[RMDB]
RNA sequence: GGGAACGACUCGAGUAGAGUCGAAAAUGGAUGAUGGCGAUCCGGGACGCGAACGUCCACGCCACCAACGGCUUCCGACGCUUCAGGGCCUCCCUGCAGGCGCUGCGAGGCGGCGGCGGUGAUGACGGAUUGGAGGUCAGUUCGCUGACCUCCAAUCAAAAGAAACAACAACAACAAC
Reactivity to 2A3 in 0.01 (KOAc 150mM, MgCl2 10mM, bicine 150mM(pH8.5), 24C), signal-to-noise 1, nucleotides 027 to 126: u100g080g020a030u070g000a050u060g050g080c020g010a010u000c010c090g030g030g010a020c000g000c030g100a130a020c030g010u000c000c000a000c010g000c000c000a020c010c000a080a060c030g080g000c000u050u000c000c000g030a030c010g000c000u000u000c010a010g040g020g050c000c030u070c010c000c010u010g010c110a020g000g040c100g000c160u040g030c130g050a030g000g000c000g050g000c000g000g000c000g000g000u040g070a190u130g070a020c070g020
Reactivity to DMS in 0.01 (KOAc 150mM, MgCl2 10mM, bicine 150mM(pH8.5), 24C), signal-to-noise 2, nucleotides 027 to 126: u020g000g010a120u000g000a040u000g030g010c030g000a160u000c050c080g020g000g000a040c040g000c120g000a030a060c030g000u000c010c010a250c040g020c000c020a070c030c030a070a200c120g000g020c040u010u000c010c000g010a040c030g000c010u000u000c020a140g000g020g000c030c040u000c020c140c070u000g010c130a030g000g020c030g020c010u000g000c120g010a040g000g030c010g030g000c090g000g010c030g000g010u000g030a110u020g000a160c200g020
This 177-nucleotide RNA was probed chemically with 2A3 and DMS. 2A3 adducts were read by reverse transcription with SuperScript II with manganese. For DMS, 1,653 sequencing reads were counted. DMS adducts were read by reverse transcription with MarathonRT.